Structure probing data (2A3 and DMS) for a 177-nucleotide construct.
For 2A3, 2,149 sequencing reads were counted.
2A3 adducts were read by reverse transcription with SuperScript II with manganese.
It was measured as part of the RMDB library RFM100.

[RMDB]
RNA sequence: GGGAACGACUCGAGUAGAGUCGAAAACAAUUUGAGAGCGAAAUCCCGAUUUAUCAGUCUUUUAGAGCUUAUAGCGAUUUGAAGAAACUGAUAAAAUGAUUUGGUUUUUUGCCAAAAAUCCUGCCAACGAUGUAACAUGCUUCGGCAUGUUACAUCGAAAAGAAACAACAACAACAAC
Reactivity to 2A3 in 0.01 (KOAc 150mM, MgCl2 10mM, bicine 150mM(pH8.5), 24C), signal-to-noise 4, nucleotides 027 to 126: c030a050a050u070u070u150g130a150g000a020g030c000g030a010a030a010u040c000c000c000g030a030u000u000u020a020u000c000a000g050u060c010u010u000u000u050a030g020a020g050c050u180u120a050u210a250g000c010g110a160u090u020u170g060a010a000g010a080a160a010c010u000g000a000u010a020a030a010a030u160g060a080u060u050u110g010g020u040u000u000u010u040u210g030c010c000a060a030a010a000a060u040c040c020u060g080c020c010a050a060
Reactivity to DMS in 0.01 (KOAc 150mM, MgCl2 10mM, bicine 150mM(pH8.5), 24C), signal-to-noise 1, nucleotides 027 to 126: c250a220a110u000u000u000g020a240g010a120g030c020g000a000a180a080u000c010c010c000g000a080u000u000u000a070u000c000a000g050u000c000u000u000u000u010a060g000a300g000c000u010u000a060u040a110g020c020g000a300u010u000u000g010a000a010g000a020a020a050c000u000g030a000u000a020a050a000a080u020g010a070u000u000u050g020g020u000u000u000u000u000u020g000c000c000a030a110a060a130a020u000c020c030u000g010c020c070a200a190